[RMDB]
RNA sequence: GGGAACGACUCGAGUAGAGUCGAAAAGCACGUCGUGCCGCCAGGAGAUAGUUUUUUUCGUCCGUAUGUCAACUAUUGACGUGUAACGCUUUGAGUCGGUACAAACAAGGGUAUAGGCCUUGUCCAAGAGCCUGGUAAAUUUCGAUUUACCAGGCUCAAAAGAAACAACAACAACAAC
Reactivity to 2A3 in 0.01 (KOAc 150mM, MgCl2 10mM, bicine 150mM(pH8.5), 24C), signal-to-noise 2, nucleotides 027 to 126: g000c030a010c030g030u010c010g000u050g120c000c010g030c020c060a070g030g060a050g010a030u170a180g010u110u000u030u000u030u040u070c050g010u020c010c010g040u110a010u060g040u030c030a060a030c070u120a090u230u070g020a010c000g010u030g020u050a040a000c070g030c060u050u050u230g000a000g000u040c030g000g070u090a030c080a000a160a020c000a020a020g060g000g040u110a110u120a280g140g060c000c000u000u000g000u000c010c000a090a040
Reactivity to DMS in 0.01 (KOAc 150mM, MgCl2 10mM, bicine 150mM(pH8.5), 24C), signal-to-noise 2, nucleotides 027 to 126: g000c040a050c050g010u000c010g000u010g030c040c020g030c100c130a060g000g030a150g020a030u010a060g040u000u000u000u000u000u000u000c030g030u000c020c020g050u000a020u010g010u000c030a010a130c170u010a120u010u000g000a030c000g010u000g010u000a070a110c140g010c000u000u010u010g040a040g040u000c000g010g000u000a050c200a090a090a120c050a000a000g000g000g010u000a170u000a110g030g000c000c020u010u000g000u010c090c070a120a190

Structure probing data (2A3 and DMS) for a 177-nucleotide construct. The DMS profile rests on 1,631 reads. For DMS the reverse transcriptase was MarathonRT.